[RMDB]
Chemical mapping of a 177-nucleotide RNA with DMS and 2A3. 2A3 is a SHAPE reagent: it acylates the 2'-hydroxyl of flexible nucleotides of all four kinds. The reactions ran in a buffer of 150 mM KOAc, 10 mM MgCl2 and 150 mM bicine (pH 8.5), at 24 C. The 2A3 profile rests on 4,393 reads.
RNA sequence: GGGAACGACUCGAGUAGAGUCGAAAAGAUAUGGAGUGGACGAUAAGCUAUACUCGGAAACGAGUAUUAGCUUUUGACGUCCCUCCUAAGUCAAACAAAACCUACUGCUUCGGCAGUAGGUUUUGAACUCACUGUACAAGUUCGCUUGUACAGUGAGAAAAGAAACAACAACAACAAC
Reactivity to DMS in 0.01 (KOAc 150mM, MgCl2 10mM, bicine 150mM(pH8.5), 24C), signal-to-noise 4, nucleotides 027 to 126: g020a030u000a300u010g000g000a020g030u010g030g010a010c000g010a160u000a020a000g020c010u000a030u000a000c000u000c010g000g000a070a090a200c000g010a020g010u000a000u010u000a000g000c000u000u000u000u010g020a190c040g000u000c000c000c000u000c000c000u000a020a050g000u000c040a100a160a240c000a000a000a000a000c000c000u000a010c000u000g010c010u000u010c230g020g010c000a000g010u000a000g010g010u000u000u000u010g010a100a190
Reactivity to 2A3 in 0.01 (KOAc 150mM, MgCl2 10mM, bicine 150mM(pH8.5), 24C), signal-to-noise 2, nucleotides 027 to 126: g020a010u060a080u190g030g000a020g090u300g040g000a000c010g030a070u030a160a010g020c000u010a000u010a000c010u000c010g030g000a090a050a030c000g000a010g030u000a010u040u060a010g010c000u010u000u000u050g030a030c010g000u000c010c010c000u000c000c000u000a060a020g000u020c000a090a110a140c000a010a010a030a000c000c000u030a010c000u000g020c000u030u070c200g120g000c030a000g000u010a000g020g000u010u000u020u000g000a000a000